Conditions: 150 mM KOAc, 10 mM MgCl2 and 150 mM bicine (pH 8.5), 24 C. Chemical mapping of a 207-nucleotide RNA with DMS and 2A3.
RNA sequence: GGGAACGACUCGAGUAGAGUCGAAAACAAUAUUACAACAAAAGACCAGUAGGGGGAGAAAAACGCACAGUACCGAACCCUUAUCAGUAGUAAUCUCAAAAGUCAACAGAUUGAUUUACUCUCAAGCAAACAGACUUCUAAGGUACGCAGCACCAAGCUGUGUGGAAGAAUUCGUUCUUCCACACAGAAAAGAAACAACAACAACAAC
Reactivity to DMS in 0.01 (KOAc 150mM, MgCl2 10mM, bicine 150mM(pH8.5), 24C), signal-to-noise 2, nucleotides 027 to 156: c030a090a150u010a090u000u000a060c030a210a210c040a060a170a160a140g010a110c080c020a040g070u000a110g020g020g020g000g000a200g000a080a110a080a050a060c040g000c040a030c060a150g000u000a120c040c010g000a070a060c020c020c010u000u010a070u000c040a070g030u010a080g020u000a110a020u030c040u010c030a040a040a020a040g040u000c040a030a300c060a140g000a120u000u010g040a070u000u000u010a080c050u000c070u000c110a020a050g020c070a060a070a110c060a140g000a020c070u000u000c030u000a060a050g000g020u000a020c090g000c020a060g000c000a080c000c040a010a070g000
Reactivity to 2A3 in 0.01 (KOAc 150mM, MgCl2 10mM, bicine 150mM(pH8.5), 24C), signal-to-noise 3, nucleotides 027 to 156: c020a020a060u110a070u270u210a050c050a110a000c020a040a250a050a030g070a090c020c050a010g020u060a030g030g000g040g100g000a060g040a060a120a010a020a010c040g040c050a050c020a070g010u040a020c030c000g020a070a080c030c000c000u020u070a040u050c040a000g040u060a000g020u030a070a090u030c070u010c080a110a150a030a030g060u070c020a020a090c020a150g090a120u060u040g010a010u060u130u100a090c030u050c000u030c060a050a040g010c020a030a030a140c010a040g060a090c010u060u020c040u110a060a070g020g000u020a010c030g000c040a000g050c020a010c010c010a030a000g070